[RMDB]
RNA sequence: GGGAACGACUCGAGUAGAGUCGAAAAGAAGCAGUCCUUAUUGUGUGUGAUGUUUAGUCAUCGCACUGUGCCUACGGGCUGCCAACGUAGGGCCAAUGUGCCGAGAGGCACUAGAAGUACGGCUUAUUAUGAAGCAUCGCCGUACCAAUGAUGCUGAGCGCCUAUCGCUAUUCGUAGCGAUAGGCGCAAAAGAAACAACAACAACAAC
Reactivity to 2A3 in 0.01 (KOAc 150mM, MgCl2 10mM, bicine 150mM(pH8.5), 24C), signal-to-noise 1, nucleotides 027 to 156: g120a060a000g010c000a000g020u000c010c000u180u090a180u240u250g070u000g000u000g050u010g070a000u000g060u000u230u180a300g100u030c010a010u000c040g060c000a040c040u030g040u010g000c000c030u000a000c000g010g010g000c000u000g050c010c000a000a000c010g190u180a100g000g000g000c030c060a070a080u090g030u060g000c010c000g000a000g000a000g050g000c000a000c000u000a080g010a040a000g000u000a000c000g000g000c010u040u000a160u160u060a290u080g130a040a030g050c000a040u060c090g000c000c000g000u060a000c000c010a120a140u150g050a010u030g030c000u060g040a000
This 207-nucleotide RNA was probed chemically with 2A3.
Values cover nucleotides 27 to 156.
Values are in units of 0.01, from 0 to 300, in steps of 10.